[RMDB]
RNA sequence: GGGAACGACUCGAGUAGAGUCGAAAAGUAGAAUCUGUCAAGCAAAACCCCAAAACCUUAGACUGAGAGCAUUUAGCCUGAUUACUCUUUAAAUCAAAUCAGGCAAUAGAGAGAAACUCGAGAGGUGAAACGGGAGUAAUGUUCGCAUUACUCCCAACAAACCGAUUAAGUUCGCUUAAUCGGUUUGAAAAGAAACAACAACAACAAC
Reactivity to 2A3 in 0.01 (KOAc 150mM, MgCl2 10mM, bicine 150mM(pH8.5), 24C), signal-to-noise 2, nucleotides 027 to 156: g040u050a080g060a140a030u080c020u040g070u070c030a030a020g000c040a030a060a160a280c030c010c000c030a000a140a050a140c040c000u060u090a020g010a020c060u140g010a020g000a010g010c010a020u010u000u100a060g010c000c000u010g000a020u000u050a040c010u060c040u160u290u140a050a070a030u250c080a020a000a000u000c010a000g070g010c000a000a000u000a000g020a000g010a010g020a050a080a030c030u020c050g020a020g000a010g050g070u040g070a100a030a020c140g000g000g000a000g000u000a000a000u000g020u050u000c070g000c020a000u010u000a000c000u000c000c000c000a000a000
Reactivity to DMS in 0.01 (KOAc 150mM, MgCl2 10mM, bicine 150mM(pH8.5), 24C), signal-to-noise 1, nucleotides 027 to 156: g020u040a100g030a030a100u000c030u040g010u000c000a120a180g000c050a070a040a070a120c080c020c010c020a000a020a100a070c060c050u010u010a110g030a100c040u000g000a090g000a050g020c000a300u000u000u000a080g010c000c000u000g000a020u010u000a050c040u010c020u000u000u040a030a050a010u000c050a090a060a050u010c000a010g020g000c000a050a060u000a070g000a130g000a140g000a100a120a090c000u000c000g000a160g000a110g020g000u000g000a080a090a090c120g030g070g010a070g020u000a010a020u000g020u000u010c300g010c010a010u000u000a010c020u000c000c000c000a020a010